[RMDB]
RNA sequence: GGGAACGACUCGAGUAGAGUCGAAAACUGACAGACAGAGUGUGAGACUGAGUCUCUCACACACUCUGUCUCUCACAGUGUCAGUGACACUCACUGACUGACUCACAGUGUCUCUGUCAGACUGAGAACCUACGCCGUAGUUCGCUACGGCGUAGGUAAAAGAAACAACAACAACAAC
Reactivity to 2A3 in 0.01 (KOAc 150mM, MgCl2 10mM, bicine 150mM(pH8.5), 24C), signal-to-noise 2, nucleotides 027 to 126: c020u030g040a010c010a050g000a000c000a010g020a010g020u000g000u000g000a000g040a020c060u160g130a030g200u090c030u000c000u010c050a040c010a000c010a010c050u020c000u010g010u000c000u000c000u010c000a100c000a050g050u010g020u010c020a000g000u000g030a000c010a030c010u000c010a050c030u020g050a030c130u120g200a110c020u050c030a050c040a090g010u010g020u060c010u000c000u000g030u030c000a020g030a150c020u060g010a030g050a090
Reactivity to DMS in 0.01 (KOAc 150mM, MgCl2 10mM, bicine 150mM(pH8.5), 24C), signal-to-noise 2, nucleotides 027 to 126: c050u010g040a060c150a040g000a000c000a050g000a010g000u000g010u000g010a000g000a090c130u000g010a120g000u010c100u000c030u010c040a080c060a050c110a050c030u000c020u010g000u000c010u000c090u000c030a090c110a050g010u000g000u000c000a020g000u010g000a040c050a030c050u000c060a020c060u000g010a050c180u010g010a080c150u000c020a080c110a010g000u010g000u000c040u000c020u000g000u000c010a080g000a190c060u010g000a150g010a070

This 177-nucleotide RNA was probed chemically with 2A3 and DMS. Source: RMDB library OK2TRN, as collected in RNAgym. 2A3 adducts were read by reverse transcription with SuperScript II with manganese. For 2A3, 2,843 sequencing reads were counted. Conditions: 150 mM KOAc, 10 mM MgCl2 and 150 mM bicine (pH 8.5), 24 C. Reactivities are given for positions 27 through 126.